The record gives the reactivity of an RNA of 177 nucleotides to 2A3. For 2A3, 774 sequencing reads were counted. Reactivities are given for positions 27 through 126. For 2A3 the reverse transcriptase was SuperScript II with manganese.

RNA sequence: GGGAACGACUCGAGUAGAGUCGAAAACUACCGAACACGGUGUUCCUCGCGUUCGGUGAAGUCGUCAUUGUCGGGGAUUUAGUCGCCGACGGCUACCUCGGGAUCGACGGCGACGGCUUCGGCACCGGUGUGUCGCUGUGUUCGCACAGCGACACACAAAAGAAACAACAACAACAAC
Reactivity to 2A3 in 0.01 (KOAc 150mM, MgCl2 10mM, bicine 150mM(pH8.5), 24C), signal-to-noise 2, nucleotides 027 to 126: c050u020a010c000c030g000a000a000c030a010c010g010g060u090g110u300u120c010c030u040c000g010c040g000u000u040c010g000g000u070g020a030a040g100u070c050g060u040c020a100u030u100g080u040c000g040g010g000g000a000u120u050u230a050g000u010c000g050c180c050g140a280c000g000g000c000u090a240c000c060u050c000g120g030g090a160u050c010g010a010c030g000g030c000g000a000c000g020g010c000u000u030c020g000g000c010a000c020c060g000

It was measured as part of the RMDB library OK1LIB. The reactions ran in a buffer of 150 mM KOAc, 10 mM MgCl2 and 150 mM bicine (pH 8.5), at 24 C.